[RMDB]
RNA sequence: GGGAACGACUCGAGUAGAGUCGAAAAUCGGAGGGAAACGCGUUUUAGUAAUCGGUCGGAUAUACUGAUUAUGAGUGAGCUGGGAGACUUCGGCGAGUUUACGUCCGACGAGAGCGACGACGCCGCAGGUCGCUAGUACGUUCGCGUACUAGCGACCAAAAGAAACAACAACAACAAC
Reactivity to 2A3 in 0.01 (KOAc 150mM, MgCl2 10mM, bicine 150mM(pH8.5), 24C), signal-to-noise 2, nucleotides 027 to 126: u090c010g030g030a060g040g000g010a000a130a000c020g000c010g000u000u000u000u180a090g000u000a080a100u000c020g080g040u000c040g080g020a040u090a040u060a100c020u020g180a140u080u150a130u300g010a000g070u070g030a010g000c000u020g000g000g020a130g060a080c100u130u110c020g000g000c070g010a010g000u010u080u120a080c100g020u000c000c000g000a020c010g050a080g000a000g030c000g000a020c020g000a010c010g030c010c030g020c010a030
Reactivity to DMS in 0.01 (KOAc 150mM, MgCl2 10mM, bicine 150mM(pH8.5), 24C), signal-to-noise 1, nucleotides 027 to 126: u000c040g040g010a180g030g020g000a030a070a150c270g000c020g030u000u020u050u000a300g000u000a040a090u000c000g000g010u000c020g000g110a040u010a130u000a050c020u020g040a050u110u000a030u000g000a050g000u030g000a090g000c040u060g000g060g000a220g000a090c170u040u020c090g000g010c000g030a030g000u040u000u010a070c130g020u020c060c000g000a000c090g000a160g000a220g000c000g000a020c170g010a020c030g000c040c050g050c040a000